[RMDB]
RNA sequence: GGGAACGACUCGAGUAGAGUCGAAAACUGUCCACUCCCCAGGAGUGGUGCUCACGGGAACAUCACUCGCCCCCACCGCCAGCUGACUUUUUCAGAAAGCUUUUCAUGGUGUAACAUAUUCCUGGGAGACGUAUUAGUAUUUCGAUACUAAUACGUCAAAAGAAACAACAACAACAAC
Reactivity to 2A3 in 0.01 (KOAc 150mM, MgCl2 10mM, bicine 150mM(pH8.5), 24C), signal-to-noise 7, nucleotides 027 to 126: c010u030g070u060c010c000a020c030u030c020c010c010c000a010g060g000a010g010u010g000g030u050g020c040u060c040a110c060g090g060g040a170a040c040a160u090c020a030c050u030c020g050c010c010c010c010c000a020c010c010g010c010c010a010g000c010u010g020a100c010u080u070u060u150u100c010a020g080a040a020a020g020c000u070u070u060u050c070a100u090g000g010u020g030u040a040a010c010a040u130a130u110u080c000c010u000g000g010g020a020
Reactivity to DMS in 0.01 (KOAc 150mM, MgCl2 10mM, bicine 150mM(pH8.5), 24C), signal-to-noise 9, nucleotides 027 to 126: c130u010g010u010c020c030a100c070u000c090c000c020c070a060g010g010a030g020u000g010g010u000g000c040u010c070a170c230g010g010g010a060a060c060a050u010c050a040c010u000c030g000c030c010c010c030c020a120c160c040g010c070c060a030g000c030u000g000a240c040u000u010u010u010u020c200a070g000a050a110a040g010c040u000u010u000u010c120a110u000g010g010u000g000u000a060a080c130a070u010a120u010u000c020c000u000g010g000g020a300